[RMDB]
RNA sequence: GGGAACGACUCGAGUAGAGUCGAAAAUUAGUGGCAAAGAUUGGCAUCGACCUCGUUGAAUCUAUCGACUGGGAGGGACCUUUGGCUUUUUGUAGUUUAUCUGUACCAGUAGUUACAAGAUUACAUGUCGUUCUCCACAUUUCGAUGUGGAGAACGAAAAAGAAACAACAACAACAAC
Reactivity to DMS in 0.01 (KOAc 150mM, MgCl2 10mM, bicine 150mM(pH8.5), 24C), signal-to-noise 1, nucleotides 027 to 126: u020u000a080g010u000g060g030c080a040a100a120g090a130u010u010g010g000c130a030u010c120g040a060c050c010u000c080g000u000u000g000a040a170u040c020u000a030u010c090g010a030c090u000g000g000g000a190g000g020g000a120c110c030u000u000u000g000g020c030u000u000u000u100u070g050u000a030g000u000u000u010a070u000c000u000g010u000a120c120c070a050g000u040a010g000u000u000a100c110a010a000g000a070u000u000a030c200a070u040g040
Reactivity to 2A3 in 0.01 (KOAc 150mM, MgCl2 10mM, bicine 150mM(pH8.5), 24C), signal-to-noise 1, nucleotides 027 to 126: u110u090a100g050u090g050g000c020a000a020a020g040a090u120u210g030g000c000a020u020c040g020a190c000c090u100c060g010u060u100g060a070a000u040c040u050a090u030c050g000a000c070u010g100g080g000a020g030g020g000a000c000c000u010u060u100g020g010c020u010u170u000u030u120g090u010a000g060u000u060u050a060u120c020u060g060u040a020c000c000a110g020u050a020g000u120u000a000c000a000a040g000a120u080u130a010c090a120u080g060

Structure probing data (DMS and 2A3) for a 177-nucleotide construct. The 2A3 profile rests on 538 reads. DMS adducts were read by reverse transcription with MarathonRT. It was measured as part of the RMDB library OK1LIB. The DMS profile rests on 1,197 reads. The reactions ran in a buffer of 150 mM KOAc, 10 mM MgCl2 and 150 mM bicine (pH 8.5), at 24 C.